Background:
An RNA of 207 nucleotides, treated with 2A3 and read out base by base. Values cover nucleotides 27 to 156.
RNA sequence: GGGAACGACUCGAGUAGAGUCGAAAAGCUAUGUGUUGGUGGUGACCCGCACCAACGUGUUAGGCACUCGACUAACACACAUAGAGCGAGUUGUAGUCCUCACUGCGGGUCACCAGUGAGAAGUAUGUCGAGUGCCAUAUUUGACUACACUCUAGCACGUUCGUAGCUAGUUCGCUAGCUACGAACGAAAAGAAACAACAACAACAAC
Reactivity to 2A3 in 0.01 (KOAc 150mM, MgCl2 10mM, bicine 150mM(pH8.5), 24C), signal-to-noise 1, nucleotides 027 to 156: g000c000u000a000u000g010u000g000u000u150g130g170u080g000g100u000g010a000c000c010c000g020c000a110c020c020a070a040c120g000u010g060u000u300a250g020g000c000a000c000u000c000g000a000c000u150a100a000c000a000c000a000c040a050u000a000g040a010g020c110g000a000g000u030u160g020u010a000g000u040c000c000u080c050a080c080u080g000c010g000g000g000u000c000a000c000c000a000g020u120g000a130g010a000a080g160u170a130u190g100u020c000g000a000g000u000g000c000c000a000u010a020u020u030u110g000a000c000u000a010c010a000c000u000c050u070a060g000c040a020
The RNA was probed in 150 mM KOAc, 10 mM MgCl2 and 150 mM bicine (pH 8.5) at 24 C. It was measured as part of the RMDB library OK3TST.